[RMDB]
RNA sequence: GGGAACGACUCGAGUAGAGUCGAAAAGGUAAUAGACGACGGCGGCGUGUGGCGAACAGGGAUACCGGUAGUCAGUGUCUGGAACAUCCCAAGGGGCGGCGGAGCUAGCACCCCGACACGUUAAGGCAAAACUUCGCACGGUUCGCCGUGCGAAGAACGAAACUAGAAUCUUCGGAUUCUAGUUUCGAAAAGAAACAACAACAACAAC
Reactivity to 2A3 in 0.01 (KOAc 150mM, MgCl2 10mM, bicine 150mM(pH8.5), 24C), signal-to-noise 1, nucleotides 027 to 156: g070g010u090a050a050u050a110g060a010c040g000a020c010g040g020c030g010g000c010g040u060g040u080g040g020c070g030a090a050c070a140g010g040g010a010u050a070c050c030g080g010u050a020g050u050c080a050g000u000g020u050c030u030g000g010a080a040c000a090u030c040c000c000a020a120g000g000g020g000c050g010g000c020g070g010a020g040c020u050a020g040c000a100c030c010c010c000g000a000c020a000c040g050u090u070a060a040g060g000c050a040a030a070a100c000u000u000c000g000c000a040c000g000g000u050u040c130g000c070c000g020u000g000c000g000a010a000g000a020a020
Conditions: 150 mM KOAc, 10 mM MgCl2 and 150 mM bicine (pH 8.5), 24 C. Chemical mapping of a 207-nucleotide RNA with 2A3. It was measured as part of the RMDB library M2RFPK. Reactivities are given for positions 27 through 156. For 2A3, 994 sequencing reads were counted.